Source: RMDB library TTRINS, as collected in RNAgym. The record gives the reactivity of an RNA of 177 nucleotides to DMS and 2A3. The reactions ran in a buffer of 150 mM KOAc, 10 mM MgCl2 and 150 mM bicine (pH 8.5), at 24 C. In probing experiments dimethyl sulfate is read out at A N1 and C N3, which are open when not base-paired. For 2A3, 5,487 sequencing reads were counted. 2A3 adducts were read by reverse transcription with SuperScript II with manganese.
[RMDB]
RNA sequence: GGGAACGACUCGAGUAGAGUCGAAAAGAUAUGGAACAGCUACCCACCGCAGAUGAUCGUUGAUCAGACCUGAGUUCGGAAACGAACUCAGGUCUGGGAGAUCUACCUGCGAGGCUGUUCCUAAGUCCUACUAUAUAAAGUUCGCUUUAUAUAGUAGAAAAGAAACAACAACAACAAC
Reactivity to DMS in 0.01 (KOAc 150mM, MgCl2 10mM, bicine 150mM(pH8.5), 24C), signal-to-noise 6, nucleotides 027 to 126: g010a140u010a150u010g010g010a010a000c020a020g010c020u010a150c030c020c030a300c140c000g000c000a010g010a070u000g000a020u000c000g010u010u000g010a070u010c000a020g000a000c000c010u010g010a020g010u000u000c000g000g000a080a070a250c010g010a020a010c000u000c000a010g000g010u000c000u000g000g000g000a020g000a010u000c000u010a050c110c010u000g000c000g000a050g020g000c000u000g000u000u000c010c000u000a030a120g010u010c080
Reactivity to 2A3 in 0.01 (KOAc 150mM, MgCl2 10mM, bicine 150mM(pH8.5), 24C), signal-to-noise 2, nucleotides 027 to 126: g070a110u300a200u300g010g000a000a000c000a000g000c010u180a300c030c000c020a000c000c000g000c000a000g000a010u010g010a000u040c030g160u300u020g010a010u010c020a010g010a020c000c010u000g010a000g020u000u030c040g010g100a120a160a100c010g000a000a000c010u000c000a000g000g000u000c000u000g000g000g000a030g000a000u000c000u020a040c000c010u000g030c000g000a000g020g000c000u010g000u010u000c000c000u000a010a000g040u060c000